Chemical mapping of a 177-nucleotide RNA with 2A3 and DMS. Conditions: 150 mM KOAc, 10 mM MgCl2 and 150 mM bicine (pH 8.5), 24 C.
RNA sequence: GGGAACGACUCGAGUAGAGUCGAAAACGGACUAUGAGGGCCGCUGGGCCACAACGGUGGCGAAGAACCGCGAAAUUGAUGCGGCCUGCAGAGAGCUGGAGGCAGAGAUUGCCUCCCUCAGAGCCCAUAACUAUGUCUGGUUCGCCAGACAUAGUUAAAAAGAAACAACAACAACAAC
Reactivity to 2A3 in 0.01 (KOAc 150mM, MgCl2 10mM, bicine 150mM(pH8.5), 24C), signal-to-noise 3, nucleotides 027 to 126: c010g030g040a020c030u080a090u180g050a120g000g000g000c020c010g010c020u040g040g140g000c040c020a030c020a210a010c070g250g010u030g010g020c040g050a130a040g070a090a000c040c030g010c060g140a080a130a100u170u140g050a050u120g020c000g010g000c000c000u000g000c010a040g090a010g010a010g100c130u090g010g030a000g000g020c010a000g020a050g020a160u100u170g000c000c000u020c000c000c000u020c000a030g000a020g020c000c000c000a040
Reactivity to DMS in 0.01 (KOAc 150mM, MgCl2 10mM, bicine 150mM(pH8.5), 24C), signal-to-noise 5, nucleotides 027 to 126: c120g000g010a050c040u010a080u010g000a110g010g010g000c000c020g030c020u000g010g020g000c010c030a040c040a110a090c210g020g020u010g010g010c000g010a090a100g010a110a120c050c030g010c090g000a060a080a200u010u000g000a100u000g020c000g000g010c010c010u000g000c040a060g010a130g010a090g010c070u010g010g000a010g000g010c000a000g000a230g010a160u010u000g010c000c000u000c010c010c000u000c010a050g000a080g010c000c010c000a200
For DMS the reverse transcriptase was MarathonRT.
For 2A3, 3,529 sequencing reads were counted.
Source: RMDB library OK2TRN, as collected in RNAgym.
Values cover nucleotides 27 to 126.